Description:
Conditions: 150 mM KOAc, 10 mM MgCl2 and 150 mM bicine (pH 8.5), 24 C. An RNA of 207 nucleotides, treated with DMS and 2A3 and read out base by base. For DMS, 13,628 sequencing reads were counted. As a SHAPE reagent, 2A3 marks flexible, mostly unpaired nucleotides at the ribose 2'-OH. For DMS the reverse transcriptase was MarathonRT. It was measured as part of the RMDB library PDB130. Values are in units of 0.01, from 0 to 300, in steps of 10.
[RMDB]
RNA sequence: GGGAACGACUCGAGUAGAGUCGAAAACUGUUUGUCUGAUCAGUACUAAUCACAGCCGUACUACUUCUACUAUCCCUGCCAGUUCUAGCAGCUGGCAUUACUAUACUACUGACAGACCGCAACCUGAACACAACCUUUUUUGAUCCAGCAGGUGGUGCAUAAGAUGGAUGUUCGCAUCCAUCUUAUGAAAAGAAACAACAACAACAAC
Reactivity to DMS in 0.01 (KOAc 150mM, MgCl2 10mM, bicine 150mM(pH8.5), 24C), signal-to-noise 4, nucleotides 027 to 156: c050u010g010u010u000u000g010u000c010u000g000a150u000c010a020g010u000a030c130u000a100a110u000c070a120c070a100g020c020c060g020u000a100c040u000a060c030u000u000c040u010a070c080u000a100u000c030c040c030u010g000c010c040a060g010u000u000c020u000a120g040c090a070g000c020u000g010g030c010a010u010u000a040c100u000a130u000a060c070u000a040c010u000g020a040c010a030g000a000c020c070g020c040a070a080c020c020u000g020a060a110c040a110c050a070a080c040c040u010u010u000u000u000u010g000a060u000c020c030a100g030c040a050g010g020u010g000g030u000g000
Reactivity to 2A3 in 0.01 (KOAc 150mM, MgCl2 10mM, bicine 150mM(pH8.5), 24C), signal-to-noise 9, nucleotides 027 to 156: c040u030g060u090u090u070g020u050c010u020g050a300u030c010a000g020u030a040c060u120a050a140u160c110a070c050a120g050c040c040g070u050a060c040u040a040c010u080u080c010u040a090c030u070a110u110c010c000c010u000g010c000c000a010g000u010u020c090u130a120g030c120a000g000c070u000g000g000c000a010u000u010a000c000u010a020u030a060c030u000a000c000u010g000a000c000a010g000a000c000c000g020c020a030a050c000c020u060g080a140a010c030a000c010a080a110c030c000u100u090u030u030u090u220g080a080u060c050c010a020g020c010a010g060g010u010g010g010u040g020